An RNA of 177 nucleotides, treated with DMS and 2A3 and read out base by base. 2A3 adducts were read by reverse transcription with SuperScript II with manganese. As a SHAPE reagent, 2A3 marks flexible, mostly unpaired nucleotides at the ribose 2'-OH.
RNA sequence: GGGAACGACUCGAGUAGAGUCGAAAACUUUUGGAAUUUAGAGCCAUUGAAGGUGAAAGCCCUGUUCGCGGGUGUCGACAUCUAGACCAUGCCCUUAGCUCCACGAGUAGGAAUGUCUGAAAGUGCACCUUACCCUGCUUUUCGAAGCAGGGUAAGGAAAAGAAACAACAACAACAAC
Reactivity to DMS in 0.01 (KOAc 150mM, MgCl2 10mM, bicine 150mM(pH8.5), 24C), signal-to-noise 2, nucleotides 027 to 126: c010u000u010u000u000g020g040a040a080u040u020u020a110g010a170g000c000c050a090u010u030g010a050a040g020g010u000g000a080a080a150g000c030c010c020u010g010u000u000c050g040c100g000g000g030u010g050u040c050g020a230c080a060u000c030u010a100g050a050c100c100a100u030g000c050c030c060u000u010a110g010c010u000c000c000a040c020g000a030g010u030a080g000g010a180a070u050g010u000c010u000g010a060a020a060g000u010g000c110a110
Reactivity to 2A3 in 0.01 (KOAc 150mM, MgCl2 10mM, bicine 150mM(pH8.5), 24C), signal-to-noise 4, nucleotides 027 to 126: c000u080u000u010u080g050g010a030a040u050u080u090a200g040a030g090c020c020a060u040u150g120a130a050g020g000u030g050a060a000a030g030c030c000c000u040g010u060u050c120g000c050g060g040g010u070g040u050c030g030a020c010a060u010c040u070a000g030a090c030c020a040u090g010c000c000c000u050u070a020g010c020u010c020c020a050c040g000a020g020u020a000g010g060a150a220u140g090u100c000u010g020a040a010a020g040u040g030c020a040

For DMS the reverse transcriptase was MarathonRT.